[RMDB]
RNA sequence: GGGAACGACUCGAGUAGAGUCGAAAAACUCUUCUAACAGAGUGUUGGGGCAUUGUAUAGUAAAGGUGCUGCUUCUUCCGAAUUGGGCAGCAUUGCCGAAGUAUGUGAGACCGAACAUGCAUGACAAAGUAAAACCGGAUUUCGAUCCGGUUUUACUAAAAGAAACAACAACAACAAC
Reactivity to DMS in 0.01 (KOAc 150mM, MgCl2 10mM, bicine 150mM(pH8.5), 24C), signal-to-noise 1, nucleotides 027 to 126: a040c030u030c020u000u000c130u010a110a130c210a070g000a090g010u000g000u010u000g000g010g000g000c020a120u000u000g010u000a070u000a100g020u060a090a160a140g020g020u000g020c030u000g020c010u000u000c100u010u020c180c180g020a150a180u030u000g000g010g030c030a020g000c090a050u000u020g000c030c030g000a050a090g010u010a020u000g000u010g000a060g010a100c020c030g020a060a080c070a000u000g020c060a100u020g020a080c170a030a080

Overview:
Structure probing data (DMS) for a 177-nucleotide construct. Source: RMDB library OK2TST, as collected in RNAgym. The DMS profile rests on 877 reads. In probing experiments dimethyl sulfate is read out at A N1 and C N3, which are open when not base-paired. The RNA was probed in 150 mM KOAc, 10 mM MgCl2 and 150 mM bicine (pH 8.5) at 24 C.